Chemical mapping of a 177-nucleotide RNA with DMS and 2A3.
[RMDB]
RNA sequence: GGGAACGACUCGAGUAGAGUCGAAAAAGACUUUUGCAUGUUUUUCGGUAGCCUAGUCUAAGUAAAACGACAAACCGUUCGUUUAUUCAUCUACACAUCCAACGAUCAGACAACCAACCGGUACUGAGCACAACUCUUAAUUCGUUAAGAGUUGUGCAAAAGAAACAACAACAACAAC
Reactivity to DMS in 0.01 (KOAc 150mM, MgCl2 10mM, bicine 150mM(pH8.5), 24C), signal-to-noise 2, nucleotides 027 to 126: a110g010a050c070u020u010u010u010g030c050a160u000g000u000u000u000u010u000c050g000g010u010a120g030c030c040u010a050g020u000c020u000a080a070g000u010a030a050a030a050c040g010a020c020a080a040a110c160c140g010u010u000c030g010u000u010u000a060u020u010c050a080u010c060u000a060c080a080c110a060u010c060c040a030a090c080g000a040u000c050a050g000a050c090a040a060c080c020a050a100c090c050g000g010u010a050c050u000g010a300
Reactivity to 2A3 in 0.01 (KOAc 150mM, MgCl2 10mM, bicine 150mM(pH8.5), 24C), signal-to-noise 2, nucleotides 027 to 126: a010g040a020c030u040u070u120u110g050c060a030u080g060u010u040u000u020u070c030g040g050u050a030g000c000c040u040a030g020u000c040u040a030a070g050u040a020a110a050a020c030g040a010c020a080a210a080c090c000g040u100u030c020g000u000u030u020a100u080u100c000a070u020c000u060a040c050a000c000a080u040c000c030a030a040c040g040a020u060c020a030g070a060c000a010a030c020c000a000a040c040c000g000g050u050a100c040u010g040a020

It was measured as part of the RMDB library OK2TST.